[RMDB]
RNA sequence: GGGAACGACUCGAGUAGAGUCGAAAAAUGUCGCCGGCAACAACAGCAAAAGCGAGCUGAACUGGAGAAUUGUGGACCAAUGAGGAAAUCGUUACCUUGGCUUAAACCACUUAAACAUCACGAGUUGAACUCUUAACAGCCUGGGACUCCAGUCCAAGGUCCAUUAUCCAUUCGUGGAUAAUGGACCAAAAGAAACAACAACAACAAC
Reactivity to 2A3 in 0.01 (KOAc 150mM, MgCl2 10mM, bicine 150mM(pH8.5), 24C), signal-to-noise 2, nucleotides 027 to 156: a000u070g080u040c040g020c110c050g050g020c070a080a060c020a020a040c000a090g100c030a090a070a060a030g150c060g030a020g010c010u000g030a030a030c000u020g000g080a010g070a120a130u140u090g000u050g030g020a030c040c040a070a120u090g010a110g020g040a020a100a030u080c040g030u060u050a120c000c010u020u020g000g000c030u050u050a120a030a040c010c030a070c060u040u080a120a040a060c030a090u190c070a040c140g030a020g050u020u090g130a150a100c010u030c010u160u220a100a010c000a050g030c010c000u000g000g000g020a070c000u000c040c020a010g020u050c020c000a110a020
Reactivity to DMS in 0.01 (KOAc 150mM, MgCl2 10mM, bicine 150mM(pH8.5), 24C), signal-to-noise 1, nucleotides 027 to 156: a110u000g030u000c000g040c020c020g050g010c020a000a120c000a030a040c010a130g100c140a100a120a150a160g030c060g040a200g040c110u000g000a050a030c010u010g010g020a060g040a120a050u000u000g050u010g010g010a090c000c020a020a110u010g000a080g080g000a050a040a140u000c100g000u010u020a020c000c020u020u000g040g000c020u010u010a110a020a110c040c000a050c100u020u000a010a020a050c040a050u000c050a120c090g000a090g020u000u000g020a100a290c030u000c030u000u010a050a110c100a130g020c050c070u000g020g050g000a110c000u000c060c030a140g020u000c000c030a090a250

Source information: An RNA of 207 nucleotides, treated with 2A3 and DMS and read out base by base. For 2A3 the reverse transcriptase was SuperScript II with manganese. The reactions ran in a buffer of 150 mM KOAc, 10 mM MgCl2 and 150 mM bicine (pH 8.5), at 24 C. Source: RMDB library OK3TST, as collected in RNAgym.